[RMDB]
Conditions: 150 mM KOAc, 10 mM MgCl2 and 150 mM bicine (pH 8.5), 24 C. This 177-nucleotide RNA was probed chemically with 2A3 and DMS. For 2A3, 7,122 sequencing reads were counted. It was measured as part of the RMDB library OK1LIB.
RNA sequence: GGGAACGACUCGAGUAGAGUCGAAAAAUCCGCGUCUUCCCACAGCGGCCUCAACUUCUCCGCGGACAAUAUUUCUCCGCCCCGGAAGACCUGCCGAUCGGGCAGCGAUGAAGUCGACGCGCCGGUCUACGCAUCCAUUAUUCGUAAUGGAUGCGUAAAAAGAAACAACAACAACAAC
Reactivity to 2A3 in 0.01 (KOAc 150mM, MgCl2 10mM, bicine 150mM(pH8.5), 24C), signal-to-noise 4, nucleotides 027 to 126: a000u040c000c000g000c010g020u020c020u030u010c000c040c000a040c030a020g110c030g020g010c000c000u090c020a080a070c030u060u040c040u030c030c010g020c020g010g040a020c080a110a130u210a190u150u210u060c050u020c010c020g030c000c000c020c000g050g000a040a020g050a050c010c000u030g000c000c000g160a230u140c040g070g020g000c030a030g000c020g050a060u120g070a040a040g080u060c020g020a070c020g010c020g010c010c000g010g010u000c020
Reactivity to DMS in 0.01 (KOAc 150mM, MgCl2 10mM, bicine 150mM(pH8.5), 24C), signal-to-noise 5, nucleotides 027 to 126: a070u010c010c010g010c050g000u020c030u000u000c000c020c020a120c190a080g000c020g000g000c020c030u000c020a060a130c080u000u000c030u020c080c100g000c070g010g000a100c260a080a090u030a110u030u030u010c150u010c020c020g010c020c020c040c100g010g000a060a080g000a130c180c020u010g000c010c040g000a080u040c070g030g010g010c040a050g010c080g010a050u000g010a050a040g000u000c020g010a040c060g010c080g000c010c010g020g040u040c080
DMS adducts were read by reverse transcription with MarathonRT.